[RMDB]
Notes
An RNA of 177 nucleotides, treated with 2A3 and DMS and read out base by base. The RNA was probed in 150 mM KOAc, 10 mM MgCl2 and 150 mM bicine (pH 8.5) at 24 C. For DMS the reverse transcriptase was MarathonRT. The 2A3 profile rests on 2,935 reads.
RNA sequence: GGGAACGACUCGAGUAGAGUCGAAAAGCACGUCCGGGAAGUCCCGUGCGAACACUUGAGCUCCGGCUUGCCCGCUCUUGUGGAUUAGGACGUUCUAGCUCCGGCUUGGCCGCUAGUUCGUCCGAAACCUCCUGAGUACGUUCGCGUACUCAGGAGGAAAAGAAACAACAACAACAAC
Reactivity to 2A3 in 0.01 (KOAc 150mM, MgCl2 10mM, bicine 150mM(pH8.5), 24C), signal-to-noise 4, nucleotides 027 to 126: g060c020a000c060g050u040c030c000g020g000g040a100a040g170u160c000c030c010g000u020g000c010g020a040a010c030a010c040u070u060g020a000g020c030u090c100c030g020g020c070u100u170g040c000c000c030g000c010u020c000u010u050g030u030g000g050a080u040u180a060g000g000a000c020g000u000u000c000u010a030g010c050u020c110c030g130g040c060u120u280g100g000c030c020g010c020u000a000g000u000u010c000g000u000c000c000g020a020a010a010
Reactivity to DMS in 0.01 (KOAc 150mM, MgCl2 10mM, bicine 150mM(pH8.5), 24C), signal-to-noise 2, nucleotides 027 to 126: g020c120a120c060g000u020c080c000g060g000g000a180a130g040u020c000c010c050g020u000g000c000g000a140a060c000a020c020u000u040g040a060g030c000u060c080c220g000g030c060u020u160g030c000c070c070g000c030u000c050u000u050g010u030g000g000a080u000u030a190g000g020a000c000g010u030u000c000u000a000g000c050u130c240c000g000g110c070u180u000g030g030c100c220g000c000u000a000g000u030u000c000g030u030c000c000g000a030a030a030